[RMDB]
RNA sequence: GGGAACGACUCGAGUAGAGUCGAAAAUUUAACCAAAUCACUCAUUAUUUCAAGGAGGAAUUAGGUUAUGUCAGUACAAUUAGAAGUUAAAGAAAGAGCUAUCCGUCCACGUUCACUAAGAAAUCAGCGGACUAACAAAGUUCGCUUUGUUAGUCCGAAAAGAAACAACAACAACAAC
Reactivity to DMS in 0.01 (KOAc 150mM, MgCl2 10mM, bicine 150mM(pH8.5), 24C), signal-to-noise 1, nucleotides 027 to 126: u000u010u000a030a100c000c000a100a080a050u010c180a120c010u000c010a090u020u000a040u020u020u010c230a060a080g010g000a060g010g000a130a070u000u010a100g060g000u000u010a020u000g020u000c060a120g010u000a010c110a010a070u020u000a040g010a100a040g020u000u010a040a060a050g000a030a050a070g000a070g000c040u000a050u000c040c110g000u010c010c090a080c080g000u000u020c060a060c050u000a090a040g010a100a100a070u010c140a090g000
Reactivity to 2A3 in 0.01 (KOAc 150mM, MgCl2 10mM, bicine 150mM(pH8.5), 24C), signal-to-noise 1, nucleotides 027 to 126: u000u030u030a020a040c000c000a000a000a020u060c020a000c060u030c020a000u010u270a090u120u300u170c070a070a120g060g010a000g040g000a120a100u040u060a050g030g010u010u000a010u030g070u000c020a020g100u020a020c020a050a120u100u140a090g030a260a060g040u040u090a040a170a120g060a050a200a000g020a060g050c010u050a020u020c000c040g060u020c040c060a040c000g000u040u000c040a040c120u000a160a000g030a140a090a030u030c050a020g100